[RMDB]
RNA sequence: GGGAACGACUCGAGUAGAGUCGAAAACGCCGGCGGGGGCACAUCGGCCACGCCGUCCUCGCGGUGCAGCACCGCAUCGGCCAGCGCGCGGAUGCGGGCCCGGUCGGUGUCGGGCACGCCUAUCAGCAUUAUCGUCCUCAUUCGUGAGGACGAUAAUAAAAGAAACAACAACAACAAC
Reactivity to 2A3 in 0.01 (KOAc 150mM, MgCl2 10mM, bicine 150mM(pH8.5), 24C), signal-to-noise 1, nucleotides 027 to 126: c020g060c030c050g140g070c010g000g030g030g010g060c090a020c000a180u140c010g030g000c040c060a040c090g000c000c000g000u030c010c000u070c050g000c020g040g030u040g040c110a060g030c040a130c100c010g030c020a000u000c000g140g020c040c040a120g080c140g000c000g020c010g230g130a150u300g020c000g020g050g000c000c010c000g020g010u030c000g000g000u020g050u040c050g000g000g030c060a040c040g090c000c000u130a150u160c030a030g120c030
Reactivity to DMS in 0.01 (KOAc 150mM, MgCl2 10mM, bicine 150mM(pH8.5), 24C), signal-to-noise 2, nucleotides 027 to 126: c120g020c070c030g020g010c000g010g000g000g000g070c050a080c140a040u010c070g030g000c040c130a210c100g000c060c030g000u010c060c020u010c070g030c080g000g030u000g000c140a140g020c070a180c000c000g030c020a020u000c020g020g000c010c010a150g000c150g000c100g000c040g000g020a070u010g000c000g010g000g030c000c080c050g080g000u020c000g000g010u010g000u010c040g010g000g040c030a120c130g000c000c010u010a060u010c180a080g000c150